Chemical mapping of a 177-nucleotide RNA with DMS and 2A3. Reactivities are given for positions 27 through 126. The DMS profile rests on 1,782 reads. The data come from the RNA Mapping Database (RMDB), library OK1LIB.
[RMDB]
RNA sequence: GGGAACGACUCGAGUAGAGUCGAAAAGGAACACGUCACUUAACUUGGUUCAAGUAGAUGGUGCACUGUGUAUGUGACCUGAGCUGUAGGAACUCACGUGGGAAACGAGCCACUUAACUUGGUUCUACAAAGCGGAGGGGUUCGCCCCUCCGCUUUGAAAAGAAACAACAACAACAAC
Reactivity to DMS in 0.01 (KOAc 150mM, MgCl2 10mM, bicine 150mM(pH8.5), 24C), signal-to-noise 2, nucleotides 027 to 126: g030g000a190a050c020a030c020g060u000c020a070c010u000u000a100a090c000u000u000g000g030u000u060c040a080a070g070u010a060g010a080u010g010g000u000g020c120a010c000u000g080u030g010u000a050u080g000u000g030a030c000c010u010g000a210g050c090u020g030u000a120g000g030a060a090c030u020c020a050c090g000u010g000g000g000a030a050a060c190g020a010g000c060c000a010c150u000u000a040a150c180u020u000g000g030u000u000c000u000a070
Reactivity to 2A3 in 0.01 (KOAc 150mM, MgCl2 10mM, bicine 150mM(pH8.5), 24C), signal-to-noise 2, nucleotides 027 to 126: g020g070a090a000c000a000c030g020u010c010a000c050u210u170a170a090c010u030u060g110g020u300u170c030a060a030g030u040a020g120a120u130g000g000u010g080c020a010c140u130g010u120g000u040a070u070g060u030g050a030c000c000u030g000a020g000c060u070g100u160a010g000g030a020a020c020u000c070a010c130g030u030g000g060g000a000a260a040c060g000a000g040c000c000a020c000u040u160a080a010c020u000u010g020g000u140u000c000u010a000